[RMDB]
This 177-nucleotide RNA was probed chemically with DMS and 2A3. The reactions ran in a buffer of 150 mM KOAc, 10 mM MgCl2 and 150 mM bicine (pH 8.5), at 24 C. It was measured as part of the RMDB library OK2TST. The 2A3 profile rests on 1,113 reads.
RNA sequence: GGGAACGACUCGAGUAGAGUCGAAAAGGCCUCGCGUUCAAGCGGCCAAUAAACCUGCGGAGCGAUAUAAUCGACGAUGCCGUCUUUGACCCAGCGCCGGGUAUCGGCAAAAUCGCUGUCGUAAUUACAGGGUACCACUAUUCGUAGUGGUACCCUGAAAAGAAACAACAACAACAAC
Reactivity to DMS in 0.01 (KOAc 150mM, MgCl2 10mM, bicine 150mM(pH8.5), 24C), signal-to-noise 1, nucleotides 027 to 126: g020g000c000c010u020c060g010c010g000u010u010c240a110a150g000c070g000g010c020c000a080a120u000a060a090a170c020c020u000g010c010g000g000a050g020c000g000a040u000a040u000a090a140u010c080g010a070c010g030a070u000g000c010c010g000u040c040u000u000u000g020a080c010c040c060a160g020c160g020c040c020g000g000g040u000a020u000c000g010g000c030a060a070a060a050u000c030g020c030u000g020u010c000g000u000a030a140u000u000a170
Reactivity to 2A3 in 0.01 (KOAc 150mM, MgCl2 10mM, bicine 150mM(pH8.5), 24C), signal-to-noise 1, nucleotides 027 to 126: g050g000c060c010u130c110g020c000g060u090u200c160a130a030g020c000g010g000c000c010a000a010u040a020a050a000c010c000u030g000c030g030g040a000g000c000g020a010u000a060u040a130a140u200c060g040a030c060g030a060u050g000c020c000g020u050c040u170u260u190g100a060c000c030c000a070g080c010g080c120c090g020g000g040u010a000u040c010g030g000c000a000a110a000a000u000c020g000c030u050g150u180c000g000u020a000a100u130u120a060